[RMDB]
RNA sequence: GGGAACGACUCGAGUAGAGUCGAAAAGGUUGCAGUUCCUGGAAUUAAGUUGACUGUGUAGCCUGGGAAGGCAAGGCUUGAGCACUGCUUCUGAAGUCAGCAACUUGAUUCCAGCAAUUGCGGCCCAGUUCAAAGAAGGUUUCGACCUUCUUUGAACAAAAGAAACAACAACAACAAC
Reactivity to 2A3 in 0.01 (KOAc 150mM, MgCl2 10mM, bicine 150mM(pH8.5), 24C), signal-to-noise 9, nucleotides 027 to 126: g020g000u020u010g000c000a000g000u000u000c010c000u000g000g000a000a010u010u010a010a000g010u010u010g120a290c010u010g010u030g100u180a030g020c010c010u040g000g040g040a060a030g070g020c050a050a030g080g000c020u060u110g040a030g020c090a100c300u170g020c060u090u060c040u140g060a050a020g050u080c000a000g000c000a000a000c000u000u000g000a000u000u000c000c000a010g000c000a000a000u000u000g000c000g000g000c000c000c010a020
Reactivity to DMS in 0.01 (KOAc 150mM, MgCl2 10mM, bicine 150mM(pH8.5), 24C), signal-to-noise 3, nucleotides 027 to 126: g000g010u010u010g010c000a010g030u000u010c290c000u010g010g010a010a010u010u000a050a000g000u000u000g000a050c020u000g000u010g010u000a240g000c010c000u000g000g040g000a060a160g000g000c010a100a100g000g000c040u000u020g030a070g020c110a140c180u020g010c070u010u010c080u030g020a070a050g020u000c020a000g000c000a000a000c010u000u000g000a000u000u000c000c000a000g000c160a010a000u000u000g010c010g010g000c000c000c050a060

The record gives the reactivity of an RNA of 177 nucleotides to 2A3 and DMS. 2A3 adducts were read by reverse transcription with SuperScript II with manganese. The reactions ran in a buffer of 150 mM KOAc, 10 mM MgCl2 and 150 mM bicine (pH 8.5), at 24 C. Values cover nucleotides 27 to 126.